[RMDB]
RNA sequence: GGGAACGACUCGAGUAGAGUCGAAAAGAUAUGGAGCGUCAACGAGUUUGAACAUACCACGAGAUACCAUCGGAAACGAUGGAAUAUCGAUGAGUGGUAUGUUCAAACUCGUUAGCGCUCCUAAGUCGAAUGAAUCACUGUUCGCAGUGAUUCAUUCAAAAGAAACAACAACAACAAC
Reactivity to DMS in 0.01 (KOAc 150mM, MgCl2 10mM, bicine 150mM(pH8.5), 24C), signal-to-noise 3, nucleotides 027 to 126: g010a110u010a300u010g020g010a030g010c010g020u000c030a020a000c030g010a040g000u000u000u000g000a020a010c000a010u000a000c010c010a020c000g010a180g020a020u000a060c000c000a010u000c000g010g000a170a120a240c010g000a020u000g000g020a100a060u000a010u000c000g020a190u010g020a250g030u000g000g010u000a000u000g010u000u000c000a000a000a000c000u000c010g010u000u000a030g000c000g000c000u000c000c010u000a000a070g010u000c150
Structure probing data (DMS) for a 177-nucleotide construct. For DMS, 3,736 sequencing reads were counted. Source: RMDB library TTRINS, as collected in RNAgym.